[RMDB]
RNA sequence: GGGAACGACUCGAGUAGAGUCGAAAAUGACAGUGUAUAGGCGCGAAAGCGUCUAUCAAUUAGCAAUGACUGUAUGCUAAUUGCCUAUUGUGAAAACAAUAGGAUGCUGUCUAACAGUCAUUGAUACGAUCUAGUUUUAUUUCGAUAGGGCUAGAUCAAAAGAAACAACAACAACAAC
Reactivity to 2A3 in 0.01 (KOAc 150mM, MgCl2 10mM, bicine 150mM(pH8.5), 24C), signal-to-noise 9, nucleotides 027 to 126: u060g000a000c000a000g000u010g010u020a000u000a000g000g000c000g000c010g040a060a040a040g000c000g000u010c000u000a000u000c000a000a000u000u000a000g000c000a010a050u070g000a000c000u000g000u020a020u040g000c000u000a000a000u000u000g000c000c000u000a000u000u010g010u010g100a070a040a010a010c000a000a000u000a000g000g000a000u000g000c000u000g000u000c000u000a010a000c000a000g000u000c010a010u040u290g090a070u070a100c120
Reactivity to DMS in 0.01 (KOAc 150mM, MgCl2 10mM, bicine 150mM(pH8.5), 24C), signal-to-noise 9, nucleotides 027 to 126: u010g000a010c000a010g010u000g020u000a020u000a000g010g000c000g010c010g000a130a100a170g010c000g020u000c000u000a000u000c000a000a000u000u000a000g000c000a040a100u010g000a010c000u000g010u000a190u010g010c000u000a000a010u000u000g000c000c000u000a000u000u000g010u000g000a140a080a150a020c000a000a010u000a000g000g000a000u000g010c010u000g000u000c000u000a070a020c000a000g000u000c000a150u030u020g000a120u030a100c190
Source: RMDB library OK1LIB, as collected in RNAgym. Structure probing data (2A3 and DMS) for a 177-nucleotide construct. The RNA was probed in 150 mM KOAc, 10 mM MgCl2 and 150 mM bicine (pH 8.5) at 24 C. The 2A3 profile rests on 109,637 reads. For 2A3 the reverse transcriptase was SuperScript II with manganese.